Chemical mapping of a 177-nucleotide RNA with DMS and 2A3. The RNA was probed in 150 mM KOAc, 10 mM MgCl2 and 150 mM bicine (pH 8.5) at 24 C. For DMS the reverse transcriptase was MarathonRT. Values cover nucleotides 27 to 126. For DMS, 45,595 sequencing reads were counted.
RNA sequence: GGGAACGACUCGAGUAGAGUCGAAAAGGCAGGAAUAGAAUGGGCCGAAUCUAGGGUGACACUUCAGGCCGUUUGCUAUAGUUGUUUGGCUUGGGGCCUGGUGGCUUAAACGGCGGUGUGUGAUGGGCAAUAUUAAAAUAUUCGUAUUUUAAUAUUGAAAAGAAACAACAACAACAAC
Reactivity to DMS in 0.01 (KOAc 150mM, MgCl2 10mM, bicine 150mM(pH8.5), 24C), signal-to-noise 8, nucleotides 027 to 126: g000g010c020a050g000g010a100a080u010a050g010a100a090u020g000g010g010c020c030g000a090a080u020c060u010a070g010g000g010u000g000a090c050a060c040u010u030c030a030g010g000c000c010g000u000u000u010g000c020u000a040u020a070g010u000u000g000u000u000u010g000g010c010u000u000g000g000g010g010c000c010u000g000g020u010g000g010c040u010u020a040a080a100c110g000g010c020g010g020u010g010u010g000u010g000a060u010g010g000g010
Reactivity to 2A3 in 0.01 (KOAc 150mM, MgCl2 10mM, bicine 150mM(pH8.5), 24C), signal-to-noise 5, nucleotides 027 to 126: g040g010c040a020g040g070a070a090u120a120g100a080a050u140g020g050g000c020c010g020a020a040u080c040u050a030g050g000g040u050g050a030c010a010c050u110u120c030a020g030g000c000c070g200u030u040u030g000c010u030a020u070a180g030u010u050g020u010u050u070g020g000c010u010u020g050g000g000g020c000c000u010g010g020u020g000g000c000u050u150a090a090a010c040g030g000c020g010g000u020g000u000g010u010g030a050u060g000g020g010